[RMDB]
RNA sequence: GGGAACGACUCGAGUAGAGUCGAAAACACCCGCAAUUCGUUGCGGGUGAGAGCACCACUCCUGCGGGAGUUAAGGGCAUACGGACAGCCGGGUGCAAAGCCAUAGCAGGUCCUUCGGGACCUGCAAACAGAAGCAUAUAUUCGUAUAUGCUUCUGUAAAAGAAACAACAACAACAAC
Reactivity to DMS in 0.01 (KOAc 150mM, MgCl2 10mM, bicine 150mM(pH8.5), 24C), signal-to-noise 6, nucleotides 027 to 126: c010a010c000c000c000g010c000a010a030u000u010c150g020u000u000g010c000g010g000g020u000g000a020g010a100g000c020a010c010c010a060c010u000c000c010u000g020c180g030g000g010a020g010u000u010a050a100g010g000g010c010a090u000a120c130g000g000a150c160a110g010c010c010g020g010g010u000g010c010a060a070a120g000c030c030a090u020a100g010c000a010g000g010u000c000c000u000u020c160g030g010g000a010c000c000u000g000c000a010a030
Reactivity to 2A3 in 0.01 (KOAc 150mM, MgCl2 10mM, bicine 150mM(pH8.5), 24C), signal-to-noise 4, nucleotides 027 to 126: c000a000c000c010c000g010c000a020a050u090u070c190g080u090u010g010c020g000g000g000u010g000a000g010a010g000c010a000c010c000a000c010u020c000c010u070g020c270g080g000g000a010g000u030u140a050a050g100g010g000c020a030u110a120c100g110g060a040c050a060g110c030c020g050g000g000u020g000c010a040a060a010g030c020c000a060u130a020g000c000a000g010g000u010c010c000u050u090c180g050g000g000a000c000c000u000g000c000a000a000